[RMDB]
RNA sequence: GGGAACGACUCGAGUAGAGUCGAAAAGAUAUGGAGACGCAUUACGUACCCUCAGAGCGAUAAGCAGUGAUCGGAAACGAUCAUACUGCUUUUGACGCUCUGAGGGUACGUAUGCGUCUCCUAAGUCCGCAGUACAGAAGUUCGCUUCUGUACUGCGAAAAGAAACAACAACAACAAC
Reactivity to DMS in 0.01 (KOAc 150mM, MgCl2 10mM, bicine 150mM(pH8.5), 24C), signal-to-noise 1, nucleotides 027 to 126: g020a110u010a300u010g000g000a010g040a030c010g000c000a010u020u000a000c000g000u000a010c000c000c000u000c000a020g000a020g050c000g050a170u000a020a010g030c010a010g020u000g000a000u000c010g030g000a140a100a300c020g000a000u000c000a080u010a090c020u000g000c000u000u000u010u000g030a300c080g020c010u000c000u000g010a000g000g010g000u000a010c030g010u030a000u000g020c000g020u000c010u000c000c010u000a010a120g000u000c050
An RNA of 177 nucleotides, treated with DMS and read out base by base. For DMS the reverse transcriptase was MarathonRT. Conditions: 150 mM KOAc, 10 mM MgCl2 and 150 mM bicine (pH 8.5), 24 C. Values cover nucleotides 27 to 126. The DMS profile rests on 1,614 reads.